An RNA of 207 nucleotides, treated with 2A3 and DMS and read out base by base. As a SHAPE reagent, 2A3 marks flexible, mostly unpaired nucleotides at the ribose 2'-OH. It was measured as part of the RMDB library PDB130. 2A3 adducts were read by reverse transcription with SuperScript II with manganese. The RNA was probed in 150 mM KOAc, 10 mM MgCl2 and 150 mM bicine (pH 8.5) at 24 C. For 2A3, 3,656 sequencing reads were counted. DMS (dimethyl sulfate) methylates the pairing face of unpaired adenines and cytosines.
RNA sequence: GGGAACGACUCGAGUAGAGUCGAAAAUAUGGUGUUUCCCAACACGUAUCUUUGCUCUAGUAUUGAACUUUAGUGAUGAGUGUACUUGGCAUGUACACCUGAUUAGUUAGCCCUUGUGGAUACGCCACUGCCGCUCAGGUACAGUAGGACAUACCCCGUAUUACGCGAAGUUCGCUUCGCGUAAUACAAAAGAAACAACAACAACAAC
Reactivity to 2A3 in 0.01 (KOAc 150mM, MgCl2 10mM, bicine 150mM(pH8.5), 24C), signal-to-noise 5, nucleotides 027 to 156: u220a080u060g090g010u030g030u020u040u040c010c000c010a000a030c030a000c040g070u070a060u050c040u040u090u100g030c010u030c020u040a070g050u060a210u140u160g080a100a050c030u090u130u100a080g040u090g180a120u060g030a020g050u010g000u030a010c030u060u040g030g000c000a010u080g000u030a000c010a000c000c000u060g020a090u080u080a060g110u050u130a040g000c000c000c000u060u180g040u090g070g010a020u030a120c040g010c010c000a030c030u040g020c010c020g000c030u050c100a030g010g000u040a060c020a020g050u090a070g000g030a010c020a040u070a140c000c000c000c040
Reactivity to DMS in 0.01 (KOAc 150mM, MgCl2 10mM, bicine 150mM(pH8.5), 24C), signal-to-noise 2, nucleotides 027 to 156: u000a050u000g020g050u000g000u000u000u000c050c070c050a150a110c060a050c050g000u000a040u010c000u000u000u010g020c010u000c050u010a120g020u010a170u010u010g010a050a080c050u000u000u000a050g020u010g020a100u000g010a060g010u010g040u000a000c010u000u000g020g000c100a300u000g000u000a020c020a010c020c040u000g010a140u000u010a080g010u010u010a130g010c000c000c180u000u000g000u020g030g040a080u010a030c080g010c000c010a090c030u000g030c020c000g050c030u000c070a090g040g010u000a050c030a070g020u010a040g020g010a070c060a070u000a080c020c000c010c080